[RMDB]
RNA sequence: GGGAACGACUCGAGUAGAGUCGAAAAGCACCACACGAAUAACCCAACUGUGGAGUGUGUAAUGCUCAACAGAGAUACCGUGUUUCGUCAUCAUUUCCUCUAGAUUUAGAAAACUCAGGGCAUCGCCUCACCCUUCUGAUUUCGAUCAGAAGGGUGAAAAAGAAACAACAACAACAAC
Reactivity to 2A3 in 0.01 (KOAc 150mM, MgCl2 10mM, bicine 150mM(pH8.5), 24C), signal-to-noise 3, nucleotides 027 to 126: g030c010a020c020c030a010c010a010c060g030a120a080u110a140a050c010c010c040a020a060c040u040g030u090g060g040a020g000u050g000u030g050u120a070a110u190g010c000u000c050a020a060c040a030g040a000g000a080u070a090c030c040g040u000g000u030u100u060c050g050u020c000a030u010c010a040u080u040u030c010c010u060c080u080a080g020a270u040u170u050a080g040a030a090a010a010c050u070c060a040g060g000g000c030a090u010c020g050c030c010
Reactivity to DMS in 0.01 (KOAc 150mM, MgCl2 10mM, bicine 150mM(pH8.5), 24C), signal-to-noise 3, nucleotides 027 to 126: g010c080a070c030c070a050c040a040c010g000a160a120u000a130a140c030c030c030a140a170c040u010g010u010g000g000a070g010u000g030u000g020u020a120a070u000g010c010u000c020a080a040c060a030g020a060g000a080u000a080c090c040g010u000g010u000u010u000c040g010u000c000a040u010c050a100u000u000u010c010c010u000c070u000a070g010a100u010u010u000a100g010a050a070a080a090c090u010c060a080g000g000g000c040a090u000c070g000c060c100